[RMDB]
RNA sequence: GGGAACGACUCGAGUAGAGUCGAAAACAUAAGCUAAACUUCGGUUUAGCUUAUGCGUCGGGGCCACAGCAAAAGUGUUCACGUCAUGGCCCCUGUCAGAUUCUGGUGAAUCUGCAAAUUCUGCUUUGCCUUCAGGGCAUAUUCGUAUGCCCUGAAGUAGCUGUACUGUAUUCGUACAGUACAGCUAAAAAGAAACAACAACAACAAC
Reactivity to DMS in 0.01 (KOAc 150mM, MgCl2 10mM, bicine 150mM(pH8.5), 24C), signal-to-noise 2, nucleotides 027 to 156: c000a010u000a010a020g020c010u000a000a000a000c000u010u010c300g050g010u010u000u000a000g020c000u000u000a000u010g000c000g000u010c090g010g000g070g050c010c010a050c080a160g030c070a100a110a110a190g030u010g010u010u000c070a130c120g030u010c080a120u000g000g020c010c010c000c000u000g000u000c010a030g010a040u000u000c020u000g050g010u000g030a030a030u000c010u000g010c020a070a070a110u000u010c070u000g020c040u000u000u000g020c140c000u000u000c020a020g020g030g010c000a020u000a000u000u000c300g010u000a030u010g010c000c010c000u000g000a000a020g020
Reactivity to 2A3 in 0.01 (KOAc 150mM, MgCl2 10mM, bicine 150mM(pH8.5), 24C), signal-to-noise 5, nucleotides 027 to 156: c000a000u000a000a000g000c000u010a010a000a000c010u040u120c210g020g000u000u010u000a000g020c000u000u000a000u010g000c010g090u090c080g000g000g000g010c000c010a030c040a040g070c070a040a090a120a090g100u130g100u190u200c090a060c110g070u060c100a070u040g010g000c000c000c010c000u000g020u020c010a000g000a010u030u000c020u250g240g030u300g090a000a000u000c000u000g000c000a020a020a060u170u080c070u070g080c030u090u070u100g020c010c000u000u000c000a000g000g000g000c010a010u010a010u010u030c090g030u020a010u010g000c010c000c010u000g000a000a000g000